Structure probing data (2A3) for a 207-nucleotide construct. Values are in units of 0.01, from 0 to 300, in steps of 10. Conditions: 150 mM KOAc, 10 mM MgCl2 and 150 mM bicine (pH 8.5), 24 C.

RNA sequence: GGGAACGACUCGAGUAGAGUCGAAAAUGGUAGAGGAAUCUUUACAUCGAAACUUCAGAAAGAAAAAGAAUGAAGUGAAGGAUAAACGUAUAUACAUACGUAUUGAAUACUAUAUCAAAAUCAAAUGAUUAAUGAUGACCCGAAUCUGUAUUUUUUCGGUGCAAAUUAAGUUCGCUUAAUUUGCACCAAAAGAAACAACAACAACAAC
Reactivity to 2A3 in 0.01 (KOAc 150mM, MgCl2 10mM, bicine 150mM(pH8.5), 24C), signal-to-noise 1, nucleotides 027 to 156: u080g010g000u030a030g000a030g100g050a100a060u040c010u080u120u030a080c050a070u090c040g050a110a030a020c010u010u010c010a020g080a080a130a000g190a110a150a090a050a000g060a090a010u020g000a000a000g000u000g010a070a070g060g030a030u090a020a090a000c010g000u000a000u020a000u000a070c050a040u020a000c000g000u010a100u070u080g040a000a050u040a220c000u010a030u030a020u160c010a000a000a000a280u000c010a070a120a060u130g020a050u080u180a080a090u050g010a000u030g030a000c000c030c000g010a010a080u110c110u080g060u040a300u020u070u000u000u000u020c050